Description: An RNA of 177 nucleotides, treated with DMS and 2A3 and read out base by base. 2A3 adducts were read by reverse transcription with SuperScript II with manganese. The DMS profile rests on 2,535 reads.

RNA sequence: GGGAACGACUCGAGUAGAGUCGAAAAACAGGCGAAGAAGGACGCGGCAAGCUGCGAAAAGCCUCGGGAAGCUGCAAGCAAGCGAUGAUCCGGGGAUAUCCGAAUGGGGUAACCUGAUCGAGGCAAUUUAAGUCCAGAGUUUCGACUCUGGACUUAAAAAAGAAACAACAACAACAAC
Reactivity to DMS in 0.01 (KOAc 150mM, MgCl2 10mM, bicine 150mM(pH8.5), 24C), signal-to-noise 2, nucleotides 027 to 126: a110c100a060g000g000c020g000a100a120g010a130a080g000g020a050c020g000c020g030g000c030a080a040g000c010u000g000c010g000a030a020a060a050g000c000c000u000c000g000g000g030a010a030g030c010u000g000c040a050a180g000c150a170a020g020c030g000a050u050g000a040u010c010c010g000g010g010g000a020u010a020u000c000c010g010a100a030u040g010g020g020g010u010a060a160c000c020u010g010a150u020c060g010a020g000g030c090a080a060u020
Reactivity to 2A3 in 0.01 (KOAc 150mM, MgCl2 10mM, bicine 150mM(pH8.5), 24C), signal-to-noise 1, nucleotides 027 to 126: a010c010a020g040g000c040g040a060a030g030a030a100g070g000a000c020g000c000g020g010c030a000a040g000c000u000g050c000g070a000a070a000a000g020c020c000u000c010g000g020g000a020a020g000c040u000g080c000a000a010g010c000a050a020g000c010g210a210u080g000a000u020c040c000g030g010g000g010a040u000a020u000c000c000g070a050a070u190g060g020g010g040u010a030a060c000c000u000g010a000u080c120g030a010g120g000c040a050a070u030
The RNA was probed in 150 mM KOAc, 10 mM MgCl2 and 150 mM bicine (pH 8.5) at 24 C. The 2A3 profile rests on 825 reads. Source: RMDB library RFM100, as collected in RNAgym.